[RMDB]
This 207-nucleotide RNA was probed chemically with 2A3.
For 2A3, 476 sequencing reads were counted.

RNA sequence: GGGAACGACUCGAGUAGAGUCGAAAAAUAAGGCAUUGGAUGGGUUAGAGCGCUCGCGUACAUGCCGCAUAUAUCAUAAACAAAUACAGGUUCAUCAUAAAUUCCAACAAAUGUAGGAUAACAUCUUCCUCCGCGAACGCUGGAACGAACAUAAUCAGACACGCAGGAAAUUCGUUUCCUGCGUGUCAAAAGAAACAACAACAACAAC
Reactivity to 2A3 in 0.01 (KOAc 150mM, MgCl2 10mM, bicine 150mM(pH8.5), 24C), signal-to-noise 1, nucleotides 027 to 156: a000u220a040a010g000g000c050a040u040u040g090g000a000u010g000g010g090u090u100a040g010a000g000c050g030c000u060c040g110c020g000u070a060c000a120u080g040c060c000g000c070a000u050a050u050a020u160c020a150u130a110a150a090c070a120a050a000u200a090c060a000g040g160u110u000c020a090u040c020a010u160a190a090a060u150u000c010c000a020a020c040a120a180a000u150g070u160a000g070g000a000u000a100a070c040a120u000c020u040u000c010c000u010c010c020g000c000g030a000a000c050g000c020u040g040g120a120a030c090g010a040a000c000a020u160a200a050u240c050a000